Record summary:
Structure probing data (DMS) for a 177-nucleotide construct. DMS adducts were read by reverse transcription with MarathonRT. The data come from the RNA Mapping Database (RMDB), library M2PK50. For DMS, 894 sequencing reads were counted.

RNA sequence: GGGAACGACUCGAGUAGAGUCGAAAACCCUCACUCUUCGGAGUGAGGGAAAUCUCAUUCCCAAUAGCUGGGUAUCCGGGCUAAGACGGAUAGGCGUUGCCAAAAGAUCUGGCUUCGGCCAGAUCAACACGAUCUUUACGUUCGCGUAAAGAUCGUGAAAAGAAACAACAACAACAAC
Reactivity to DMS in 0.01 (KOAc 150mM, MgCl2 10mM, bicine 150mM(pH8.5), 24C), signal-to-noise 1, nucleotides 027 to 126: c000c000c000u010c000a000c000u000c000u000u000c120g030g000a010g040u010g010a000g040g050g000a000a020a030u010c100u010c060a230u000u010c010c010c010a180a070u000a010g020c040u010g010g010g020u020a010u010c020c000g000g000g000c090u030a140a030g000a050c010g010g000a060u000a070g030g000c020g030u000u000g020c020c030a110a080a110a150g030a010u000c000u000g000g000c000u000u020c200g010g000c000c000a010g000a000u000c000a040a150